[RMDB]
This 177-nucleotide RNA was probed chemically with 2A3 and DMS. Reactivities are given for positions 27 through 126. For 2A3, 1,863 sequencing reads were counted. Conditions: 150 mM KOAc, 10 mM MgCl2 and 150 mM bicine (pH 8.5), 24 C. For DMS the reverse transcriptase was MarathonRT. As a SHAPE reagent, 2A3 marks flexible, mostly unpaired nucleotides at the ribose 2'-OH.
RNA sequence: GGGAACGACUCGAGUAGAGUCGAAAACUGCAUUCUUAAACCCUCUUGGUAGCUUCGUUCUAAGUGCUUCCAAGAUAUGAGUGAAUGCUAUAGAAAUUGCAGGGGAGUCCAAAGGGCUGCGCUUCUCAUACUACCCAGGGUUCGCCCUGGGUAGUAUAAAAGAAACAACAACAACAAC
Reactivity to 2A3 in 0.01 (KOAc 150mM, MgCl2 10mM, bicine 150mM(pH8.5), 24C), signal-to-noise 4, nucleotides 027 to 126: c060u050g000c000a010u000u010c030u080u240a140a130a120c000c010c000u010c000u000u000g000g010u050a000g010c030u160u280c110g210u220u170c190u250a200a240g030u030g030c000u030u000c000c000a000a000g000a010u120a100u110g020a020g040u040g000a020a020u060g010c000u000a020u050a120g020a000a080a030u090u050g060c030a030g000g030g000g030a020g030u010c020c000a120a040a040g090g020g000c020u050g000c040g000c050u090u000c000u000c010
Reactivity to DMS in 0.01 (KOAc 150mM, MgCl2 10mM, bicine 150mM(pH8.5), 24C), signal-to-noise 3, nucleotides 027 to 126: c070u000g000c010a010u000u000c010u020u030a110a150a160c090c200c120u010c000u000u020g000g000u000a010g000c000u020u020c070g000u030u030c190u030a160a140g010u040g010c010u000u010c020c020a020a000g000a030u030a010u010g030a130g010u030g010a050a020u020g000c020u040a160u020a080g010a070a070a090u000u000g000c040a010g000g000g000g000a060g040u000c060c040a050a130a110g020g010g030c060u000g000c080g000c050u010u020c030u000c050